[RMDB]
RNA sequence: GGGAACGACUCGAGUAGAGUCGAAAAGCCUGAUUUGUUCCGUCAGGGGUGUUUGUGUUCGCCAGGCGUUGUUGCCUCCUUGUGACACGUAUCCUUCGAUCAUGUCGCCGAGGAAUGCGAUGUGGACAGUAUACAUGAUCUUCGGAUCAUGUAUACUAAAAGAAACAACAACAACAAC
Reactivity to DMS in 0.01 (KOAc 150mM, MgCl2 10mM, bicine 150mM(pH8.5), 24C), signal-to-noise 7, nucleotides 027 to 126: g010c010c010u000g000a050u000u010u010g010u000u000c020c020g010u000c020a030g010g000g010g020u000g000u000u010u000g020u000g010u000u000c040g020c040c100a080g010g020c080g010u000u010g000u000u000g000c030c030u000c050c060u010u000g010u000g010a040c020a020c020g010u000a050u000c010c080u000u010c110g010a060u000c040a050u000g010u000c030g020c050c090g000a060g010g010a060a070u000g010c020g010a050u000g010u000g010g000a100c150
Reactivity to 2A3 in 0.01 (KOAc 150mM, MgCl2 10mM, bicine 150mM(pH8.5), 24C), signal-to-noise 7, nucleotides 027 to 126: g050c010c000u010g030a040u080u040u240g040u050u020c030c020g020u010c020a010g000g020g020g040u050g040u050u220u120g040u020g020u040u080c020g020c040c020a020g020g000c050g060u080u100g060u080u100g110c000c000u010c000c010u050u040g030u020g020a010c010a000c040g030u040a060u050c010c020u070u080c070g040a050u090c020a020u050g030u020c010g010c030c020g040a050g060g090a090a030u130g000c020g020a040u030g010u030g030g030a020c030
Structure probing data (DMS and 2A3) for a 177-nucleotide construct. It was measured as part of the RMDB library OK2TST. 2A3 adducts were read by reverse transcription with SuperScript II with manganese.